The record gives the reactivity of an RNA of 177 nucleotides to DMS. Conditions: 150 mM KOAc, 10 mM MgCl2 and 150 mM bicine (pH 8.5), 24 C. For DMS the reverse transcriptase was MarathonRT. The data come from the RNA Mapping Database (RMDB), library OK2TST.
RNA sequence: GGGAACGACUCGAGUAGAGUCGAAAAAAGAGACUCAUUUAGGGAUGUGGCCAGGCAGCAACAAGAGCCUAGGUCUCCUGGCUGUGAUCCAGGAAUAUCUCUGCUGAGAUGCAGGAGGAGACGCUAGGACGCAUGGUUCAUUCGUGAACCAUGCGUCAAAAGAAACAACAACAACAAC
Reactivity to DMS in 0.01 (KOAc 150mM, MgCl2 10mM, bicine 150mM(pH8.5), 24C), signal-to-noise 1, nucleotides 027 to 126: a070a030g010a140g000a100c110u020c060a050u000u000u010a050g010g000g020a080u000g000u000g020g040c000c020a060g000g010c080a070g000c100a080a050c170a080a090g000a120g000c020c000u000a020g000g000u000c000u000c000c000u000g000g020c010u000g010u000g000a020u010c000c000a030g000g000a060a130u010a080u020c100u000c060u020g020c100u000g030a180g020a020u000g010c020a030g000g010a000g000g000a010g000a030c010g030c030u000a020g000